An RNA of 207 nucleotides, treated with DMS and 2A3 and read out base by base.
For DMS the reverse transcriptase was MarathonRT.
Conditions: 150 mM KOAc, 10 mM MgCl2 and 150 mM bicine (pH 8.5), 24 C.
[RMDB]
RNA sequence: GGGAACGACUCGAGUAGAGUCGAAAAGCCGAAGAUUUCAGUCAGGCAGCAGAGGAGCGUGACUAUGUACUAUAAAUCACAAAUCAUGCGCGUGAUUAUUUCAUCAUGGGGAAAGCGAAACGCAAGAAACAAGAGUAUGAGCCACUUCCGCCUUGUGAACGACUCAUAUAUUCGUAUAUGAGUCGUUAAAAGAAACAACAACAACAAC
Reactivity to DMS in 0.01 (KOAc 150mM, MgCl2 10mM, bicine 150mM(pH8.5), 24C), signal-to-noise 3, nucleotides 027 to 156: g040c030c020g000a120a100g010a150u000u000u010c060a070g010u010c050a100g020g020c040a110g010c050a080g010a110g000g020a120g030c070g020u000g000a060c040u010a100u000g020u010a040c110u000a160u000a090a080a110u010c050a080c040a060a080a090u000c040a090u010g040c030g050c100g060u010g020a070u000u000a100u010u000u010c040a040u000c050a030u010g040g020g030g010a020a050a070g010c030g020a050a060a030c030g020c030a050a100g020a080a090a080c070a060a080g000a080g040u000a080u000g000a060g010c010c020a040c060u000u000c020c020g000c010c030u000u000g010u000g020
Reactivity to 2A3 in 0.01 (KOAc 150mM, MgCl2 10mM, bicine 150mM(pH8.5), 24C), signal-to-noise 8, nucleotides 027 to 156: g050c030c030g030a080a030g040a100u150u210u220c070a040g040u020c010a010g010g050c020a010g030c060a010g020a020g020g020a030g020c050g020u020g020a030c040u060a090u160g060u040a060c050u050a040u130a180a120a080u100c050a010c040a080a120a060u110c070a060u150g050c050g000c010g040u000g010a030u030u090a050u090u130u110c060a090u000c010a050u100g030g000g000g010a010a080a020g020c040g030a070a030a010c080g000c050a050a030g070a090a110a020c060a070a020g020a010g060u060a080u120g010a020g030c030c010a040c020u040u000c020c020g040c020c010u030u040g030u030g070
2A3 is a SHAPE reagent: it acylates the 2'-hydroxyl of flexible nucleotides of all four kinds.
2A3 adducts were read by reverse transcription with SuperScript II with manganese.
The 2A3 profile rests on 6,118 reads.